Description:
An RNA of 177 nucleotides, treated with 2A3 and DMS and read out base by base. The RNA was probed in 150 mM KOAc, 10 mM MgCl2 and 150 mM bicine (pH 8.5) at 24 C. For 2A3, 11,832 sequencing reads were counted.
[RMDB]
RNA sequence: GGGAACGACUCGAGUAGAGUCGAAAAGGUGAGCUGGACGGGAAGUAGCUCCAGCGACUGCCUCCGAAGCUUUGAUAAGAGCAACUCCAUCUACGUUGCUCAAGUAGGUGGUAGCAGCAAACACCGAGGAUUAGGCUAUAUUCGUAUAGCCUAAUCCAAAAGAAACAACAACAACAAC
Reactivity to 2A3 in 0.01 (KOAc 150mM, MgCl2 10mM, bicine 150mM(pH8.5), 24C), signal-to-noise 9, nucleotides 027 to 126: g010g000u010g020a030g000c000u010g000g010a010c040g080g060g110a160a080g090u200a020g020c060u000c000c000a000g000c010g020a060c000u000g000c000c010u010c000c010g040a120a050g020c090u170u170u210g120a120u170a170a120g010a000g010c010a000a010c010u060c070c020a200u080c060u140a070c120g020u040u030g020c000u010c010a000a010g000u010a020g010g010u020g020g010u030a010g010c040a010g020c020a050a060a040c010a010c000c010g000a100
Reactivity to DMS in 0.01 (KOAc 150mM, MgCl2 10mM, bicine 150mM(pH8.5), 24C), signal-to-noise 7, nucleotides 027 to 126: g010g010u000g000a080g000c010u000g010g000a030c080g010g000g030a130a110g020u040a130g000c070u000c000c020a010g010c010g010a150c000u000g000c010c020u010c010c010g010a250a180g000c070u010u020u030g010a130u050a120a100g010a010g000c000a020a020c010u020c170c190a150u070c190u050a110c150g000u000u000g010c010u000c010a040a020g000u010a070g000g010u000g000g030u000a030g010c080a060g010c150a080a040a190c010a010c000c010g000a200
For DMS, 14,366 sequencing reads were counted.